[RMDB]
RNA sequence: GGGAACGACUCGAGUAGAGUCGAAAAGAGUAUUCGUACUCCUUGAAGAUAUGGAGCACGAACUACAUUCGUAGUUGCGUUGAAACACGCUCGGAAACGAGCGUGUGGAGCAAUGAAGAAUGCGUGCUCCUAAGUCAGCGAUCCCUUUCGAGGGAAACUUUGUAGGAACUUUCGAGUUCCUACAAAGAAAAGAAACAACAACAACAAC
Reactivity to DMS in 0.01 (KOAc 150mM, MgCl2 10mM, bicine 150mM(pH8.5), 24C), signal-to-noise 3, nucleotides 027 to 156: g020a060g030u000a070u010u000c170g020u000a000c010u020c000c000u000u010g010a160a190g030a190u000a140u000g000g020a020g050c000a020c000g000a060a170c040u000a170c000a060u000u000c000g010u000a300g000u030u000g020c010g010u000u000g020a260a190a010c000a020c000g030c010u030c000g020g020a100a080a170c010g010a010g000c000g080u000g000u000g010g000a190g040c000a020a020u000g010a190a300g000a040a020u000g000c000g030u000g000c000u000c000c000u000a000a080g000u000c000a160g000c090g010a140u000c000c000c000u000u010u000c240g020a070g000g010g020a030a040a010
Reactivity to 2A3 in 0.01 (KOAc 150mM, MgCl2 10mM, bicine 150mM(pH8.5), 24C), signal-to-noise 6, nucleotides 027 to 156: g040a000g010u050a060u110u250c250g030u070a040c020u020c030c050u090u160g110a150a050g000a020u010a000u050g000g000a000g010c000a000c000g010a020a000c030u160a040c080a010u010u010c010g040u090a010g010u000u010g020c030g160u200u020g000a000a000a000c000a000c000g000c000u000c000g000g000a000a010a000c000g010a000g000c000g000u000g000u010g000g000a010g010c000a000a010u070g060a100a050g000a000a000u000g010c000g000u000g040c000u000c000c000u000a000a000g000u000c010a020g050c030g140a110u070c020c000c000u030u060u070c180g100a050g010g010g000a130a040a040